[RMDB]
RNA sequence: GGGAACGACUCGAGUAGAGUCGAAAACGUGGACAUCUUUGGGGCCAUUAUCCUGUCUACCUCAUGGGGAUUAGGACGUGGACAUCUUUGGGGACAUUAUUCUGUCUCCCACAUGGGGAUUAGGACGCGCAUUACUCGCCUUCGGGCGAGUAAUGCGAAAAGAAACAACAACAACAAC
Reactivity to 2A3 in 0.01 (KOAc 150mM, MgCl2 10mM, bicine 150mM(pH8.5), 24C), signal-to-noise 1, nucleotides 027 to 126: c090g040u040g050g000a000c020a140u250c190u120u080u280g030g000g070g070c000c000a050u000u030a080u070c000c000u000g000u000c000u000a080c010c010u020c000a050u020g000g000g000g050a000u190u190a080g050g030a030c070g110u170g080g040a000c000a000u010c080u060u170u250g000g010g000g000a000c000a020u080u230a210u300u130c080u070g020u000c000u000c100c010c010a190c000a000u000g000g010g000g010a000u000u160a130g000g060a000c000g000
Chemical mapping of a 177-nucleotide RNA with 2A3.
2A3 adducts were read by reverse transcription with SuperScript II with manganese.
Values cover nucleotides 27 to 126.